[RMDB]
RNA sequence: GGGAACGACUCGAGUAGAGUCGAAAAGAGUAUAAGCGGGAGGCAGCGUUUCCUAGAGAUAAUCAUGUCACAUCGUUUCUGACGAGGUUGGUCGGCUUCCGCCUGAUUAACUGGAAAUUUGACAUAACCUAGGGCCUAUCUUCGGAUAGGCCCUAGGAAAAGAAACAACAACAACAAC
Reactivity to 2A3 in 0.01 (KOAc 150mM, MgCl2 10mM, bicine 150mM(pH8.5), 24C), signal-to-noise 2, nucleotides 027 to 126: g030a000g100u290a150u130a230a080g020c130g040g000g000a040g010g000c040a070g020c080g010u000u000u040c000c010u040a040g020a030g010a120u130a060a050u180c050a010u060g030u020c000a020c020a180u060c090g030u000u050u090c110u080g110a080c100g020a050g010g010u030u000g020g000u050c030g000g000c020u270u050c020c110g030c000c000u030g010a080u020u160a070a050c010u010g000g110a000a100a120u190u060u080g060a030c060a050u100a060a010
Reactivity to DMS in 0.01 (KOAc 150mM, MgCl2 10mM, bicine 150mM(pH8.5), 24C), signal-to-noise 2, nucleotides 027 to 126: g000a020g010u060a000u040a060a100g030c070g000g040g020a060g040g000c040a040g000c090g000u000u050u020c000c000u000a090g000a110g010a040u020a030a130u000c120a000u000g020u010c000a110c300a090u070c050g000u000u030u000c100u010g040a140c050g030a120g000g000u000u000g000g010u000c050g030g010c010u000u060c160c140g000c010c050u000g020a000u000u000a010a010c030u020g000g000a030a020a230u000u010u000g010a020c030a100u020a130a250